[RMDB]
RNA sequence: GGGAACGACUCGAGUAGAGUCGAAAACUGUCCUGUGUGGAAGUACGUGAGUACUUCACGCUCUAGGGGACUAGAGCCACACAGAUCGUGGAGCGAUGUCUUGGAACUACUCCCGUAGUUCACGUAUGACUCACGUCAUACCAAGACGACAGCCACGCCGCUAUACCAUAUUCGUAUGGUAUAGCGGAAAAGAAACAACAACAACAAC
Reactivity to 2A3 in 0.01 (KOAc 150mM, MgCl2 10mM, bicine 150mM(pH8.5), 24C), signal-to-noise 5, nucleotides 027 to 156: c020u030g010u010c000c000u010g000u000g000u000g060g000a010a010g010u000a010c040g120u150g150a100g010u000a000c000u000u010c020a020c030g010c000u000c000u010a040g020g020g050g040a030c000u000a000g000a000g000c010c000a000c000a000c000a000g010a020u050c010g000u050g120g100a090g070c040g000a040u070g000u000c000u000u020g050g000a010a000c000u010a000c030u110c100c080c090g000u000a000g000u000u000c020a030c090g010u000a000u000g010a000c010u030c210a080c130g000u000c000a000u000a010c000c010a000a000g010a000c020g000a000c000a010g020c000c000a010c010g030
Reactivity to DMS in 0.01 (KOAc 150mM, MgCl2 10mM, bicine 150mM(pH8.5), 24C), signal-to-noise 2, nucleotides 027 to 156: c010u000g000u000c010c000u000g040u000g050u000g010g000a020a030g000u000a020c000g010u000g000a300g030u000a000c000u010u010c010a100c110g010c010u010c010u010a040g000g030g030g010a300c020u000a000g000a030g010c000c020a040c000a030c030a040g000a030u000c030g000u000g010g010a170g030c030g000a060u010g020u000c010u000u000g000g010a010a040c010u000a040c000u010c170c210c210g040u000a050g010u000u000c000a110c080g000u000a020u010g000a020c020u000c210a160c200g000u000c010a020u000a020c020c000a040a040g010a040c000g050a040c030a050g000c000c020a050c050g030